[RMDB]
An RNA of 207 nucleotides, treated with 2A3 and read out base by base. The 2A3 profile rests on 1,048 reads. For 2A3 the reverse transcriptase was SuperScript II with manganese. Values cover nucleotides 27 to 156. Conditions: 150 mM KOAc, 10 mM MgCl2 and 150 mM bicine (pH 8.5), 24 C.
RNA sequence: GGGAACGACUCGAGUAGAGUCGAAAAAGACGGAAACCCAUCGACUGUCACCAGAUGCUGCAUCACCUGAUCACUGAUGGCUCAACGGUAUCCGUCGGUACAACUGAAUACUUGUAGCUGCCUUUUGAAAAGGAGUUCAUCUUCGGAUGAACUCCAACGACAAUGCACAGUUCGCUGUGCAUUGUCGAAAAGAAACAACAACAACAAC
Reactivity to 2A3 in 0.01 (KOAc 150mM, MgCl2 10mM, bicine 150mM(pH8.5), 24C), signal-to-noise 2, nucleotides 027 to 156: a000g020a010c030g000g010a060a020a030c020c000c080a040u130c080g070a080c060u090g000u030c020a000c030c010a020g060a140u080g020c090u090g050c060a110u150c060a110c040c010u060g020a050u060c070a020c060u040g000a000u030g010g000c040u050c060a060a070c080g010g000u020a050u000c000c000g000u000c000g000g000u040a020c020a070a050c120u150g100a130a010u120a140c070u030u120g010u050a020g030c040u090g030c020c000u170u240u130u200g060a030a060a050a080g000g000a010g000u000u000c000a000u000c010u040u020c110g140g000a000u000g000a000a000c000u000c000c000a000a000